[RMDB]
RNA sequence: GGGAACGACUCGAGUAGAGUCGAAAAGAUUUUUCGUGUUCGAGUAAAGGGCUGAACUGGGCGGCGCUAAAGCGAUCGGGUGCUCGGGUCAGCCAUUGUAUCGCCUGAACGGUAGCGCGCUCAACAAACUCAAAAUAAUCUUCGGAUUAUUUUGAGUAAAAGAAACAACAACAACAAC
Reactivity to DMS in 0.01 (KOAc 150mM, MgCl2 10mM, bicine 150mM(pH8.5), 24C), signal-to-noise 5, nucleotides 027 to 126: g010a150u010u000u000u000u000c040g010u010g000u000u000c070g010a060g000u000a080a110a130g010g010g010c020u010g010a030a040c070u000g000g010g020c010g020g030c000g010c040u010a040a100a180g010c040g010a120u010c100g000g000g030u010g010c020u000c010g010g000g010u000c030a050g010c000c000a010u010u000g010u010a090u000c050g020c050c040u000g020a070a100c090g000g020u000a050g010c090g010c070g010c020u000c040a040a090c150a060a100
Reactivity to 2A3 in 0.01 (KOAc 150mM, MgCl2 10mM, bicine 150mM(pH8.5), 24C), signal-to-noise 3, nucleotides 027 to 126: g010a010u040u100u040u070u170c020g000u040g010u080u040c020g010a010g020u100a050a140a040g090g010g000c010u020g000a050a010c010u030g020g000g020c020g070g020c000g000c070u190a200a110a060g070c020g030a060u090c070g060g020g190u120g010c000u020c000g020g000g030u050c010a000g010c000c010a000u000u020g000u010a050u070c040g020c020c010u020g100a120a040c040g040g000u050a050g000c020g000c000g000c030u020c030a000a070c020a030a110